RNA sequence: GGGAACGACUCGAGUAGAGUCGAAAAGCACGGCCUGCAGGAAUUCCUGGCAUUGAUGCAUCCAGCGCCUUAAUCGUACCUUCUAACCUUCGGCGCCAGAAUGCGGUACGUCAUAAGUCUCCACACGGCACCCAUCCCGCUAGGCGUCCUUUGCCGCGACACCGCAUAUUUUCGAAUAUGCGGUGUCAAAAGAAACAACAACAACAAC
Reactivity to 2A3 in 0.01 (KOAc 150mM, MgCl2 10mM, bicine 150mM(pH8.5), 24C), signal-to-noise 2, nucleotides 027 to 156: g020c000a010c090g000g010c050c050u080g040c020a050g000g070a030a120u100u090c000c020u070g020g010c020a020u000u110g080a030u120g040c000a040u010c000c000a040g000c010g010c020c060u090u030a090a040u130c090g060u010a080c050c000u100u120c070u150a090a120c020c040u070u140c040g000g000c000g010c000c000a080g030a090a030u090g010c020g000g000u020a040c040g020u000c020a080u030a120a060g090u000c000u000c060c010a020c000a010c030g040g000c000a010c020c000c020a020u050c020c020c000g010c060u040a030g030g040c030g000u050c010c000u100u080u070g020c030c090g080c030
An RNA of 207 nucleotides, treated with 2A3 and read out base by base. The data come from the RNA Mapping Database (RMDB), library OK3TST.